[RMDB]
RNA sequence: GGGAACGACUCGAGUAGAGUCGAAAACUCACGACGUUCGCGUCGUGAGAAAUAAAUUCAGGGGUAAUUCGAGCGCAAAUAUUACCGCUGAUGCGCUCGAAAAAAGGGUAUCCUUCGGGAUACCCAACAAUCAGUUAGGGUUCGCCCUAACUGAUUGAAAAGAAACAACAACAACAAC
Reactivity to 2A3 in 0.01 (KOAc 150mM, MgCl2 10mM, bicine 150mM(pH8.5), 24C), signal-to-noise 3, nucleotides 027 to 126: c000u000c000a000c000g010a000c000g020u050u110c260g000c010g090u000c010g000u000g000a000g000a000a000a010u060a000a070a020u120u050c030a020g010g000g050g000u050a050a070u040u010c010g010a010g010c010g020c000a030a070a070u150a120u170u170a130c040c050g030c150u050g010a020u010g010c010g000c010u000c000g000a000a000a000a000a000a000g000g000g010u000a000u000c010c000u010u040c130g040g010g000a000u000a000c000c000c000a000a000
Reactivity to DMS in 0.01 (KOAc 150mM, MgCl2 10mM, bicine 150mM(pH8.5), 24C), signal-to-noise 4, nucleotides 027 to 126: c000u000c000a010c000g010a010c010g020u000u010c230g010c000g040u000c000g030u000g000a010g010a010a050a070u010a060a060a100u000u000c040a090g020g000g000g000u000a130a220u000u000c000g000a020g010c000g010c000a010a060a110u000a090u000u000a070c070c070g010c070u000g000a140u000g000c010g010c000u000c010g010a000a000a020a090a060a180g000g000g000u000a000u000c000c000u010u010c190g010g010g000a010u000a000c000c000c000a020a010
This 177-nucleotide RNA was probed chemically with 2A3 and DMS. For DMS, 5,082 sequencing reads were counted. For DMS the reverse transcriptase was MarathonRT.